This 207-nucleotide RNA was probed chemically with 2A3. For 2A3 the reverse transcriptase was SuperScript II with manganese. The reactions ran in a buffer of 150 mM KOAc, 10 mM MgCl2 and 150 mM bicine (pH 8.5), at 24 C.
RNA sequence: GGGAACGACUCGAGUAGAGUCGAAAAGACGUAAUCCGCGCAAAUCCACAAACGCCAACUAUGAGCGUUUCGCUGUAGCCGCUUAAGGCAACAGCCGGGGCCGCCUGAGCCCUGUUACCAAAGACGGGAAACUCGAUGCCAUUCGUGGCAUCGAGAAGGCAAAGCAAACAUUCGUGUUUGCUUUGCCAAAAGAAACAACAACAACAAC
Reactivity to 2A3 in 0.01 (KOAc 150mM, MgCl2 10mM, bicine 150mM(pH8.5), 24C), signal-to-noise 2, nucleotides 027 to 156: g040a000c020g020u050a140a040u090c140c040g000c010g020c050a030a130a120u050c030c010a070c080a090a030a000c020g010c010c000a090a080c070u110a140u300g060a100g050c000g020u000u050u080c050g000c000u000g010u010a020g000c000c000g050c170u260u230a100a050g000g000c010a030a010c000a000g000c000c010g010g020g000g000c010c040g040c010c000u020g010a010g010c000c000c000u000g070u090u030a020c010c020a000a000a000g140a040c030g010g000g010a050a050a020c000u000c000g000a010u010g000c000c000a030u050u040c150g110u050g000g000c000a010u000c000g000a000g000a000a000